[RMDB]
RNA sequence: GGGAACGACUCGAGUAGAGUCGAAAAGCACAGCAUUGAACAGGCAAAUCACGCCAAGCGCCUGGCCGCCGCCAGUGGGUUUGCCAACGAGCUGCCCUUUAUGGCCGUGGACACCUCGUCAGCUAUCGUCUCUGUUACAUUUCGAUGUAACAGAGACAAAAGAAACAACAACAACAAC
Reactivity to 2A3 in 0.01 (KOAc 150mM, MgCl2 10mM, bicine 150mM(pH8.5), 24C), signal-to-noise 3, nucleotides 027 to 126: g020c030a000c030a070g040c050a100u050u180g060a150a060c040a060g030g010c020a020a010a070u120c060a050c180g000c020c020a030a040g070c030g070c040c010u050g040g010c000c020g010c030c050g000c000c000a010g020u050g020g070g000u100u160u120g010c000c010a100a060c070g030a050g030c000u010g000c010c010c000u050u110u040a160u080g000g000c000c030g010u040g020g030a010c010a030c040c020u040c020g040u060c050a010g040c020u060a070u230c060
Reactivity to DMS in 0.01 (KOAc 150mM, MgCl2 10mM, bicine 150mM(pH8.5), 24C), signal-to-noise 3, nucleotides 027 to 126: g000c080a150c070a030g010c080a090u000u010g010a070a120c160a110g010g000c040a040a060a040u010c050a130c080g010c050c050a070a120g000c030g000c070c020u000g000g000c030c040g010c220c120g020c010c070a060g020u010g010g010g020u000u000u000g010c030c010a130a140c190g000a080g020c020u000g010c010c020c010u000u000u010a080u000g010g010c000c070g000u000g000g040a060c090a050c090c000u000c050g010u010c070a080g000c060u000a100u010c140
Annotation
Structure probing data (2A3 and DMS) for a 177-nucleotide construct. The 2A3 profile rests on 2,818 reads. Conditions: 150 mM KOAc, 10 mM MgCl2 and 150 mM bicine (pH 8.5), 24 C.